[RMDB]
RNA sequence: GGGAACGACUCGAGUAGAGUCGAAAAGGCUAUUGUAGGUACAAUUAUUAAAAUCAUCAAAGCAAUUAUCGACAUUUUCGUAAAAUAAUUUAAACGAAUUGAAUACUUAAAAUUCUCAGGCCACUGUCAUGUGGACUUACUUCGGUAAGUCCACAUGAAAAGAAACAACAACAACAAC
Reactivity to 2A3 in 0.01 (KOAc 150mM, MgCl2 10mM, bicine 150mM(pH8.5), 24C), signal-to-noise 2, nucleotides 027 to 126: g050g000c030u080a100u130u050g020u040a080g000g000u020a040c070a110a100u060u050a070u170u220a120a150a100a150u150c100a040u080c100a020a020a020g010c000a000a120u080u060a120u200c030g000a000c050a010u010u100u050u010c030g010u050a000a260a000a150u220a000a130u090u040u190a220a110a020c010g000a010a000u000u050g040a090a000u040a040c000u010u060a040a040a070a150u110u020c050u020c050a030g000g090c030c010a030c000u050g030u070

Structure probing data (2A3) for a 177-nucleotide construct. Source: RMDB library RFM100, as collected in RNAgym. The reactions ran in a buffer of 150 mM KOAc, 10 mM MgCl2 and 150 mM bicine (pH 8.5), at 24 C.